[RMDB]
Source: RMDB library OK1LIB, as collected in RNAgym.
The record gives the reactivity of an RNA of 177 nucleotides to DMS.
For DMS, 1,219 sequencing reads were counted.
The RNA was probed in 150 mM KOAc, 10 mM MgCl2 and 150 mM bicine (pH 8.5) at 24 C.
RNA sequence: GGGAACGACUCGAGUAGAGUCGAAAAGAAACGGAAACGGAAAUAAAGCUGUCGAAGACGGAAAUAAACUAUGUAUCUAUAUCAUCAUAGGAGACAGCGAAAAGAUAUAGAUAGAACGUCAAAGAAAGGGUAGUCAUACUUUCGAGUAUGACUACCCAAAAGAAACAACAACAACAAC
Reactivity to DMS in 0.01 (KOAc 150mM, MgCl2 10mM, bicine 150mM(pH8.5), 24C), signal-to-noise 1, nucleotides 027 to 126: g000a080a070a150c080g000g010a010a120a120c060g010g020a000a150a180u000a050a070a160g040c000u000g000u000c000g000a140a100g000a000c000g000g000a050a040a210u050a020a070a050c150u000a040u030g000u000a010u000c000u000a000u000a040u000c000a120u000c110a060u030a300g010g030a090g000a110c000a000g000c020g030a100a040a010a050g000a010u020a000u000a000g000a020u000a000g000a170a060c060g000u020c070a040a050a030g000a080a140a100